The record gives the reactivity of an RNA of 177 nucleotides to 2A3. For 2A3, 733 sequencing reads were counted. Values are in units of 0.01, from 0 to 300, in steps of 10. The RNA was probed in 150 mM KOAc, 10 mM MgCl2 and 150 mM bicine (pH 8.5) at 24 C.
[RMDB]
RNA sequence: GGGAACGACUCGAGUAGAGUCGAAAAGAUCUGGAAUCAUGGAGCAACAUCAAGUUAUCUUACACUUUCUUUAUCUGCAGAGGGAAUGGGAAGGUUACCAAGAGAAUUGACACUUCUUGGUACUCUGCCUUCGCAUGGGCUUCGGCCCAUGCGAAGGAAAAGAAACAACAACAACAAC
Reactivity to 2A3 in 0.01 (KOAc 150mM, MgCl2 10mM, bicine 150mM(pH8.5), 24C), signal-to-noise 2, nucleotides 027 to 126: g040a040u020c090u110g040g070a010a110u040c040a090u150g050g040a020g060c070a020a070c060a120u140c090a090a040g050u070u070a000u070c160u050u070a070c010a000c050u000u020u000c000u000u090u060a290u030c050u110g060c030a000g040a030g000g060g040a090a130u060g000g020g080a000a020g070g000u100u030a010c000c000a000a000g020a000g040a010a140u200u160g050a030c050a000c110u070u060c000u000u040g000g000u010a040c020u010c010u010g040